[RMDB]
An RNA of 177 nucleotides, treated with 2A3 and DMS and read out base by base. Conditions: 150 mM KOAc, 10 mM MgCl2 and 150 mM bicine (pH 8.5), 24 C. DMS (dimethyl sulfate) methylates the pairing face of unpaired adenines and cytosines.
RNA sequence: GGGAACGACUCGAGUAGAGUCGAAAAAGAUGGCGCAGAGGAAGUGAUUGAGCGGAAAUGUCAAUUAAAUGUCGAGGCACCUUACCUCGUCAAAAAGGUGCUGCCGUAUUCUUUCGAAAUUGGCGAAAGGUAUUUAUGCCUUCGGGCAUAAAUACCUAAAAGAAACAACAACAACAAC
Reactivity to 2A3 in 0.01 (KOAc 150mM, MgCl2 10mM, bicine 150mM(pH8.5), 24C), signal-to-noise 2, nucleotides 027 to 126: a020g090a080u030g000g020c040g000c030a040g040a030g080g050a090a020g010u030g000a070u030u020g010a080g020c000g000g020a000a150a010u100g000u010c030a050a030u060u120a150a070a150u090g030u110c030g030a010g030g000c030a010c010c000u030u040a060c000c060u080c020g080u030c100a000a010a000a070a000g010g000u010g000c010u010g000c020c010g000u030a030u060u060c040u050u090u040c010g090a050a110a180u030u010g030g000c010g050a070a010
Reactivity to DMS in 0.01 (KOAc 150mM, MgCl2 10mM, bicine 150mM(pH8.5), 24C), signal-to-noise 2, nucleotides 027 to 126: a050g030a140u000g010g030c020g060c040a030g000a080g000g010a150a110g020u050g000a000u000u000g030a040g000c060g030g000a020a090a010u040g020u030c010a020a050u020u000a110a020a060u030g000u020c010g010a300g000g010c040a030c030c030u000u000a060c130c100u030c020g020u000c060a050a010a020a040a010g000g040u020g000c040u000g000c030c030g010u000a030u020u010c090u000u000u070c100g030a050a060a090u010u010g000g000c080g010a010a020